[RMDB]
RNA sequence: GGGAACGACUCGAGUAGAGUCGAAAAAAAGAUUUAAAACUAAUAAAAACCGAUCGUUCGCGAUCGGAACGAAUCGUACGCGAUUCGAACGCAUUACUACGGUAAUGCGACGUACUCACUACGGUGAGUACGAGAUGUCGUUCGCGACAUCAAGAAUAAUCUACGGAUUAUUCACACCGUUCGUUCGCGAACGGUGAAAUCACCGUACCUAUUUAGGUUUACGCUCCAAGAUCGGUGGAUAGCAGCCCUAUCAAUAUCUAGGAGAAAAGCCGUCAUUCGUGACGGCUAAAAGAAACAACAACAACAAC
Reactivity to 2A3 in 0.01 (KOAc 150mM, MgCl2 10mM, bicine 150mM(pH8.5), 24C), signal-to-noise 1, nucleotides 027 to 266: a000a030a030g100a030u300u300u300a180a130a020a000c060u100a100a300u240a260a300a150a020a020c020c000g010a020u000c040g040u130u110c240g000c020g130a000u020c070g050g040a070a030c040g020a000a040u060c040g020u030a000c260g050c060g060a010u000u000c000g000a050a040c010g000c000a000u000u000a000c020u000a020c220g110g000u000a000a000u000g000c000g010a000c000g040u000a010c020u030c010a000c000u010a000c300g120g000u000g000a000g000u000a000c000g010a030g000a020u000g000u000c000g000u000u060c190g000c000g070a000c000a000u000c070a000a060g010a000a000u000a000a000u000c000u030a020c300g050g040a000u000u000a000u000u000c040a000c010a000c060c000g100u000u010c000g000u010u130c150g010c000g130a000a000c000g000g000u010g000a070a040a000u220c000a000c000c000g010u020a000c020c000u150a200u300u140u240a020g020g000u000u040u030a020c040g000c000u010c000c030a000a000g000a010u040c000g010g020u020g010g010a020u000a020g020c060a010g050c090c000c000u000a000u010c000a000a000u000a020u240c000u020a010g020g020a000g120a000a090a000
Background: Chemical mapping of a 307-nucleotide RNA with 2A3. The reactions ran in a buffer of 150 mM KOAc, 10 mM MgCl2 and 150 mM bicine (pH 8.5), at 24 C. 2A3 adducts were read by reverse transcription with SuperScript II with manganese. The 2A3 profile rests on 1,572 reads.